[RMDB]
RNA sequence: GGGAACGACUCGAGUAGAGUCGAAAAAAUACUGUCGCCCAGUUCGCUACCGAGCUGAAAAUGCCUGCCAACGUGCUGCUCGAGCAGUUGCGUGCGGCCGGUGUUGACCUCAAAUCGGUGGACGACACCUCCGAUCCUGAUUCGUCAGGAUCGGAGGAAAAGAAACAACAACAACAAC
Reactivity to 2A3 in 0.01 (KOAc 150mM, MgCl2 10mM, bicine 150mM(pH8.5), 24C), signal-to-noise 1, nucleotides 027 to 126: a000a000u290a030c080u040g050u090c040g000c010c020c010a080g030u100u070c020g000c000u010a000c010c010g000a010g070c070u030g020a080a070a000a000u020g000c010c000u000g000c010c000a000a000c010g040u000g040c000u010g030c030u050c180g110a100g060c000a000g040u300u300g030c000g020u020g040c120g050g010c000c000g070g030u000g050u030u020g030a040c030c070u110c050a010a040a030u050c010g000g000u070g020g080a230c000g000a000c010a060
Reactivity to DMS in 0.01 (KOAc 150mM, MgCl2 10mM, bicine 150mM(pH8.5), 24C), signal-to-noise 1, nucleotides 027 to 126: a050a160u020a090c100u010g030u000c090g000c000c000c010a090g020u000u000c040g000c060u020a070c020c030g000a000g000c180u000g000a000a040a030a000u000g000c000c000u000g000c010c000a270a000c010g020u000g030c010u000g000c030u000c240g000a210g020c010a000g030u000u000g060c010g000u000g030c300g000g000c000c140g010g010u000g030u000u000g000a060c250c150u010c000a030a030a200u000c040g000g000u010g050g000a010c000g040a030c020a060